[RMDB]
RNA sequence: GGGAACGACUCGAGUAGAGUCGAAAAUAUAUAUAGAUCGUUCUAUUAACGUACACGCGCGGGUCGUCGGUGGUCGGCGAGCCCACGGACGAACUUACUCGCGCGAACGAGUAAAAAUCGCCAGGAAUACCUAUACUUCUUUCGAGAAGUAUAGGUAAAAAGAAACAACAACAACAAC
Reactivity to 2A3 in 0.01 (KOAc 150mM, MgCl2 10mM, bicine 150mM(pH8.5), 24C), signal-to-noise 3, nucleotides 027 to 126: u070a000u000a000u000a000u060a020g050a080u120c020g060u120u000c050u040a200u130u130a150a060c030g020u060a030c060a020c070g010c000g000c000g000g010g030u040c010g000u000c050g190g000u000g030g020u020c090g010g020c020g000a000g010c010c010c010a000c000g020g010a000c000g000a020a000c020u070u130a010c000u060c010g000c000g000c000g000a000a010c010g000a010g040u090a010a110a020a000a060u000c000g010c010c020a020g070g130a110a090
Reactivity to DMS in 0.01 (KOAc 150mM, MgCl2 10mM, bicine 150mM(pH8.5), 24C), signal-to-noise 5, nucleotides 027 to 126: u000a070u000a100u000a090u010a070g000a080u010c070g010u010u000c010u000a080u000u000a090a190c080g000u000a090c230a080c030g000c010g010c010g010g000g000u000c000g000u000c000g020g030u000g000g000u000c040g000g000c020g020a040g010c300c000c000a010c010g010g020a020c000g000a120a070c160u000u010a070c000u010c000g000c010g010c040g010a010a010c020g000a100g000u000a020a050a030a040a040u000c010g010c000c010a250g010g010a110a160

Source information: This 177-nucleotide RNA was probed chemically with 2A3 and DMS. For 2A3, 5,050 sequencing reads were counted. The data come from the RNA Mapping Database (RMDB), library M2PK90. For DMS, 6,517 sequencing reads were counted.